[RMDB]
RNA sequence: GGGAACGACUCGAGUAGAGUCGAAAAACCUGUCGUCGUCGACGAAGGCUGGUAAGCCGUGACGCGUGGAGGAGAGCCCGGGUCGCGCUCUUGGGGGUAACCCCUUUGAGACUUGACCGGUUCCUCUCCCACCCUGCCGAGCUUCCUGCCGCUAGUCCUACUAAAGAUCCUUCGGGAUCUUUAGUAGAAAAGAAACAACAACAACAAC
Reactivity to 2A3 in 0.01 (KOAc 150mM, MgCl2 10mM, bicine 150mM(pH8.5), 24C), signal-to-noise 3, nucleotides 027 to 156: a000c030c000u070g070u090c110g000u010c020g050u060c050g010a010c010g030a070a010g020g010c030u060g040g050u300a010a000g010c060c040g100u110g090a150c070g030c080g080u080g020g010a020g000g000a010g000a010g000c000c030c060g000g000g030u170c120g040c020g000c180u010c020u020u000g000g000g000g000g020u010a010a020c000c010c010c030u000u010u060g000a010g000a010c070u250u300g000a000c010c000g000g010u100u110c010c000u000c000u010c010c000c000a020c010c000c000u010g010c010c010g030a030g000c000u000u010c000c020u010g010c000c010g000c010u010a010g010u000c000
Reactivity to DMS in 0.01 (KOAc 150mM, MgCl2 10mM, bicine 150mM(pH8.5), 24C), signal-to-noise 2, nucleotides 027 to 156: a080c000c000u000g030u000c020g030u000c030g000u010c050g020a110c080g020a160a290g010g030c020u020g010g000u000a070a050g030c020c080g000u010g030a020c110g020c140g020u010g020g000a050g030g000a050g020a070g010c150c000c010g070g010g020u010c010g010c200g040c000u000c000u000u000g010g000g040g030g000u000a160a240c030c010c010c000u000u000u000g010a100g000a090c030u000u000g020a070c030c030g020g020u010u010c130c010u000c030u030c010c010c020a030c010c040c040u010g050c000c010g020a070g000c020u000u010c020c020u010g000c000c020g030c090u000a110g000u000c040
This 207-nucleotide RNA was probed chemically with 2A3 and DMS. Values cover nucleotides 27 to 156. The data come from the RNA Mapping Database (RMDB), library VIROID. The 2A3 profile rests on 2,719 reads.